This 207-nucleotide RNA was probed chemically with 2A3 and DMS. For 2A3 the reverse transcriptase was SuperScript II with manganese. It was measured as part of the RMDB library OK3TST. Values cover nucleotides 27 to 156. For DMS, 3,174 sequencing reads were counted. DMS adducts were read by reverse transcription with MarathonRT. For 2A3, 1,037 sequencing reads were counted.
RNA sequence: GGGAACGACUCGAGUAGAGUCGAAAAAACUCUGGUAGACAGUUAUGCAUAUAUAUAUUUUUUGGUGAAUUACAAUGAGAAAAAGUCCAGGUGCAAUGGCUCACAUCUGUAACUCCAGCACUUUAGGAGGCGGAUCCAGGAGGAUGGCUUUAGCCCAAUACUAUUACCUAUUCGUAGGUAAUAGUAUAAAAGAAACAACAACAACAAC
Reactivity to 2A3 in 0.01 (KOAc 150mM, MgCl2 10mM, bicine 150mM(pH8.5), 24C), signal-to-noise 2, nucleotides 027 to 156: a000a000c150u150c020u020g000g040u020a070g040a090c070a040g010u070u060a020u080g020c000a030u080a020u110a010u040a010u020a110u300u120u050u010u120u070g000g000u010g020a040a040u080u040a040c060a060a080u120g030a010g090a160a130a020a070a010g020u030c100c050a010g040g010u030g000c000a050a130u030g010g000c020u030c030a020c000a030u020c040u020g030u070a050a010c000u000c000c000a010g050c010a050c110u050u110u100a050g000g010a000g010g000c050g000g020a010u000c030c010a020g050g010a010g010g010a020u040g000g020c060u050u070u060a030g000c000c000c000a000
Reactivity to DMS in 0.01 (KOAc 150mM, MgCl2 10mM, bicine 150mM(pH8.5), 24C), signal-to-noise 2, nucleotides 027 to 156: a070a040c030u000c030u000g000g040u010a080g020a090c050a120g000u000u000a060u000g010c040a110u000a110u010a130u000a130u000a030u020u010u000u000u000u000g000g030u010g000a100a110u000u010a070c060a090a080u000g000a150g000a040a060a090a060a190g030u000c020c030a050g030g020u010g000c010a040a070u000g030g000c040u000c000a070c050a050u000c020u000g020u000a060a090c040u000c020c000a090g010c070a030c090u000u000u000a100g010g000a060g010g000c050g000g020a070u000c010c040a050g010g000a100g010g000a070u000g000g000c040u000u000u000a060g000c010c010c000a100